[RMDB]
RNA sequence: GGGAACGACUCGAGUAGAGUCGAAAAAUCUUCUUUGAUGAGAACCCACAAAUUGCGAAGAUGAUCGUUGAAAAGGUUUUCAUUGCAGCUCAGGCUAGAGAGGCAGCAAAGAAGGCUAGGGAGCUGACCGUAGGGAGAUAUUCGUAUCUCCCUACGGAAAAGAAACAACAACAACAAC
Reactivity to 2A3 in 0.01 (KOAc 150mM, MgCl2 10mM, bicine 150mM(pH8.5), 24C), signal-to-noise 2, nucleotides 027 to 126: a010u000c000u030u000c000u040u030u130g060a050u050g000a010g000a020a010c000c030c030a020c050a040a130a070u190u170g000c010g020a040a020g140a170u140g080a140u060c020g020u060u180g080a020a070a050a050g030g000u010u000u000u050c020a000u050u080g030c000a000g000c000u010c020a030g240g070c070u280a020g020a000g000a010g110g000c000a030g000c000a040a010a020g020a040a010g020g000c020u030a060g010g100g030a040g000c040u030g070a060
Reactivity to DMS in 0.01 (KOAc 150mM, MgCl2 10mM, bicine 150mM(pH8.5), 24C), signal-to-noise 4, nucleotides 027 to 126: a070u020c010u010u000c010u000u010u010g000a100u010g000a050g010a030a030c010c000c080a140c240a070a060a120u020u010g000c010g020a080a150g010a110u040g000a110u000c040g040u000u010g000a050a090a170a110g000g000u000u000u010u000c010a080u000u020g010c010a040g030c020u000c020a110g010g030c180u010a070g000a070g000a040g020g010c030a110g020c030a020a020a060g010a030a030g010g010c110u000a080g010g010g010a070g010c090u000g000a250